[RMDB]
RNA sequence: GGGAACGACUCGAGUAGAGUCGAAAAGAGUAGAGGAAUUCUCGGAAAGCUCUCCCAAGAAGAACCAGAAUCCCUCAAGAGAGAGGAGAAUCCCCAUGACGCUGGAAGAGACUUCCGGGUAACCAAGUAGCGCACUGCUUCGGCAGUGCGAAAAGAAACAACAACAACAAC
Reactivity to DMS in 0.01 (KOAc 150mM, MgCl2 10mM, bicine 150mM(pH8.5), 24C), signal-to-noise 6, nucleotides 027 to 129: g020a120g070u010a110g010a040g000g000a020a110u010u010c000u010c020g010g010a000a000a000g020c090u030c040u010c000c040c060a040a100g050a070a050g000a090a040c140c080a160g010a060a090u020c030c020c000u030c020a080a140g030a120g020a100g020a110g000g000a160g030a090a070u010c000c030c050c080a160u120g030a080c230g030c000u020g010g010a000a000g000a040g010a000c010u030u010c020c030g000g030g000u050a090a230c060c040a070a100g030u040a080g000
Reactivity to 2A3 in 0.01 (KOAc 150mM, MgCl2 10mM, bicine 150mM(pH8.5), 24C), signal-to-noise 2, nucleotides 027 to 129: g040a000g020u200a040g010a020g020g010a080a060u160u020c020u000c000g000g010a070a000a000g010c000u000c000u010c000c010c000a030a000g100a010a000g010a010a030c010c010a030g060a010a090u050c000c000c010u030c040a060a000g130a010g040a000g000a010g100g010a010g020a030a040u080c070c010c050c000a050u100g030a020c090g000c050u000g020g000a000a000g030a030g020a040c000u000u000c000c000g000g000g000u000a000a000c020c000a050a040g030u040a000g060